The record gives the reactivity of an RNA of 177 nucleotides to DMS and 2A3. For 2A3, 387 sequencing reads were counted. 2A3 adducts were read by reverse transcription with SuperScript II with manganese.
RNA sequence: GGGAACGACUCGAGUAGAGUCGAAAAGGCAAACAUCAUCAACCGAAUCUAAAAAGACUGAGUCUGUGCCUGGAUUUCUAGCUUGAACAGAUAUAUUUAAAGAUGAGUUUGCUGGAACUUGUACAAACAAAGGUUGACCUUUCGAGGUCAACCUUUGAAAAGAAACAACAACAACAAC
Reactivity to DMS in 0.01 (KOAc 150mM, MgCl2 10mM, bicine 150mM(pH8.5), 24C), signal-to-noise 2, nucleotides 027 to 126: g000g000c000a010a000a030c010a070u010c000a000u000c000a170a160c300c190g000a050a030u010c040u000a010a090a190a010a010g000a070c000u000g010a060g000u000c000u000g020u030g030c140c040u030g000g000a080u020u020u040c050u010a060g000c050u000u010g000a060a120c130a010g040a030u000a070u060a050u030u010u030a080a050a120g000a000u000g000a000g000u000u000u000g000c000u000g000g000a110a030c170u000u000g010u020a030c050a120a040a040
Reactivity to 2A3 in 0.01 (KOAc 150mM, MgCl2 10mM, bicine 150mM(pH8.5), 24C), signal-to-noise 1, nucleotides 027 to 126: g010g000c020a020a000a000c020a300u000c130a000u000c000a030a020c160c040g150a200a040u030c040u180a000a080a000a000a050g220a290c050u020g070a020g020u000c000u010g010u050g030c040c030u040g030g000a040u170u110u180c170u270a020g040c020u000u000g080a090a070c020a000g050a050u000a000u030a060u070u160u150a120a180a020g000a000u000g030a000g000u000u000u000g000c000u020g000g000a020a000c000u000u000g090u070a000c000a000a170a040